[RMDB]
An RNA of 177 nucleotides, treated with 2A3 and DMS and read out base by base. The RNA was probed in 150 mM KOAc, 10 mM MgCl2 and 150 mM bicine (pH 8.5) at 24 C. For 2A3 the reverse transcriptase was SuperScript II with manganese. For DMS the reverse transcriptase was MarathonRT.
RNA sequence: GGGAACGACUCGAGUAGAGUCGAAAAUGAUAUGUUUGGUGUAUUGGCAGAUGCACCAGAGCAGGUUGAGCAAUCUUAUGCUAAUGUGCCGCCGUGGCAAGAGCAGAUUGUUUUAGACGGUGAGCGGCUUUAGCAACUGUUUCGACAGUUGCUAAAGAAAAGAAACAACAACAACAAC
Reactivity to 2A3 in 0.01 (KOAc 150mM, MgCl2 10mM, bicine 150mM(pH8.5), 24C), signal-to-noise 3, nucleotides 027 to 126: u110g010a010u050a030u230g080u060u080u040g000g000u020g010u000a030u020u060g150g050c060a040g020a060u020g000c000a030c000c000a000g020a000g010c070a020g030g070u110u120g030a020g010c020a010a050u040c020u070u190a110u170g020c010u060a150a110u150g020u070g120c000c010g030c070c050g120u150g000g000c030a020a020g010a000g020c000a010g030a160u040u050g010u000u020u030u040a060g010a020c070g050g020u050g000a020g000c020g060g000
Reactivity to DMS in 0.01 (KOAc 150mM, MgCl2 10mM, bicine 150mM(pH8.5), 24C), signal-to-noise 6, nucleotides 027 to 126: u010g010a130u010a050u010g010u000u000u000g000g010u010g010u000a020u000u000g000g010c140a090g020a150u000g010c030a020c010c010a030g010a050g030c040a030g010g010u010u000g000a070g010c040a030a040u010c070u010u010a140u010g010c030u010a080a090u010g020u010g010c030c030g010c110c120g000u000g020g010c030a030a070g010a040g020c020a070g000a080u000u000g010u000u010u000u010a130g010a070c050g010g010u010g000a080g020c040g010g010